[RMDB]
This 177-nucleotide RNA was probed chemically with DMS and 2A3. DMS (dimethyl sulfate) methylates the pairing face of unpaired adenines and cytosines. DMS adducts were read by reverse transcription with MarathonRT. The 2A3 profile rests on 6,077 reads. For 2A3 the reverse transcriptase was SuperScript II with manganese. The RNA was probed in 150 mM KOAc, 10 mM MgCl2 and 150 mM bicine (pH 8.5) at 24 C.
RNA sequence: GGGAACGACUCGAGUAGAGUCGAAAAGUAAAGCGCGAGGGCUGGUGAGGAUUUGGAGGCGUGAGAGAGAUUGUAGGGAUCCUGCCUCCUCCCUCUCCGCGCGGCGCCUCCUAGCGGAUAUAAAAAACAUAAUAAAUGGGUUCGCCCAUUUAUUAUGAAAAGAAACAACAACAACAAC
Reactivity to DMS in 0.01 (KOAc 150mM, MgCl2 10mM, bicine 150mM(pH8.5), 24C), signal-to-noise 5, nucleotides 027 to 126: g010u010a070a120a160g000c020g010c020g010a120g010g010g010c020u010g020g010u000g000a030g000g000a080u000u000u000g010g010a020g000g000c010g010u000g000a150g000a100g000a150g000a040u000u000g010u010a150g010g000g000a050u000c010c000u000g000c000c000u000c000c010u000c150c000c010u000c010u000c000c020g000c030g000c050g000g000c040g000c010c020u000c010c010u000a090g000c120g010g000a100u010a070u010a010a040a070a060a060a150
Reactivity to 2A3 in 0.01 (KOAc 150mM, MgCl2 10mM, bicine 150mM(pH8.5), 24C), signal-to-noise 4, nucleotides 027 to 126: g030u050a050a100a040g030c020g010c040g020a280g030g130g030c110u150g020g030u020g010a010g010g030a050u270u110u150g000g010a000g020g000c030g030u200g010a090g000a000g000a010g010a070u040u100g100u220a180g020g140g000a000u020c000c000u030g010c000c000u000c000c000u000c000c000c000u000c000u010c000c000g010c030g010c000g040g020c000g010c000c000u000c000c000u020a030g030c050g070g030a040u070a000u170a270a160a020a020a010a000